[RMDB]
RNA sequence: GGGAACGACUCGAGUAGAGUCGAAAAUCUAUGGUCUUCGGACCAUAGAAAAUAAGAAUCGGAAGCAUGAGUACCGAGACAAACAUGCAAACGCGAAAGCGAAAACAAUCCAGUUCGCUGGAUUGAAGAUCGAAUCUAAGUUCGCUUAGAUUCGAUCAAAAGAAACAACAACAACAAC
Reactivity to 2A3 in 0.01 (KOAc 150mM, MgCl2 10mM, bicine 150mM(pH8.5), 24C), signal-to-noise 3, nucleotides 027 to 126: u000c010u000a000u010g000g000u000c010u040u040c250g070g000a010c000c000a000u000a000g000a000a000a000a000u100a010a020g090a050a090u050c010g000g010a060a020g000c000a000u010g010a020g090u090a070c000c010g020a020g040a080c090a010a030a000c000a000u000g000c000a110a060a030c040g000c010g050a120a010a020g000c010g060a050a020a040a020c010a000a000u000c010c000a000g020u050u050c190g080c070u010g010g000a000u000u020g000a030a020
Reactivity to DMS in 0.01 (KOAc 150mM, MgCl2 10mM, bicine 150mM(pH8.5), 24C), signal-to-noise 2, nucleotides 027 to 126: u000c000u000a000u000g020g000u000c000u000u030c230g030g010a020c000c000a000u010a000g000a010a020a100a050u020a130a120g010a140a220u010c010g000g000a180a100g000c010a000u000g010a230g000u070a040c010c000g010a050g060a220c270a000a000a080c020a000u010g010c010a170a090a100c050g030c000g010a070a050a160g050c000g000a090a020a100a090c000a000a000u000c000c000a000g010u000u010c260g020c000u000g000g010a010u000u010g000a060a110